An RNA of 207 nucleotides, treated with DMS and 2A3 and read out base by base. The reactions ran in a buffer of 150 mM KOAc, 10 mM MgCl2 and 150 mM bicine (pH 8.5), at 24 C. It was measured as part of the RMDB library OK3TST.

[RMDB]
RNA sequence: GGGAACGACUCGAGUAGAGUCGAAAAGCAUGGGAGGAAUAGCGGCCUGGCUGGAGCUAUGCAGCCCUUUCUGAGAGGAAACCUCAUGAGUGUGCCGCAAUGGUCUGGCUGUGGCCCCUCUCGGCAGGCUGUGAGGCAGGCCAGCAGUGGCUCCAGCACUCAAAGGUAAGUUCGCUUACCUUUGAGUAAAAGAAACAACAACAACAAC
Reactivity to DMS in 0.01 (KOAc 150mM, MgCl2 10mM, bicine 150mM(pH8.5), 24C), signal-to-noise 1, nucleotides 027 to 156: g020c070a050u010g030g000g040a040g030g000a100a080u010a010g020c040g000g000c070c020u010g010g010c020u020g040g020a100g020c020u000a100u010g020c030a190g000c000c000c090u010u010u000c080u000g000a180g010a160g020g010a120a130a130c040c020u000c020a060u010g010a040g030u000g020u000g010c000c020g000c150a060a090u000g010g000u000c030u000g010g020c040u000g010u010g030g010c040c020c000c000u010c030u010c050g000g030c170a050g000g010c000u000g030u010g040a090g010g020c050a110g010g000c030c010a070g040c050a070g020u000g020g000c010u020c010c010a050g010c120
Reactivity to 2A3 in 0.01 (KOAc 150mM, MgCl2 10mM, bicine 150mM(pH8.5), 24C), signal-to-noise 3, nucleotides 027 to 156: g020c030a080u130g060g020g020a090g020g010a090a050u050a090g010c040g010g020c050c020u060g060g000c010u000g020g010a040g010c020u030a040u100g000c000a020g010c010c060c000u060u100u040c050u030g020a030g000a020g020g050a060a090a110c060c010u040c020a090u130g210a030g050u210g020u100g030c020c010g010c040a010a090u070g010g020u040c040u050g050g050c040u040g020u090g160g000c010c000c000c020u030c000u000c000g000g000c010a010g010g030c010u000g020u050g070a040g000g020c090a040g040g010c040c030a000g000c010a050g060u150g050g000c010u000c000c000a000g010c030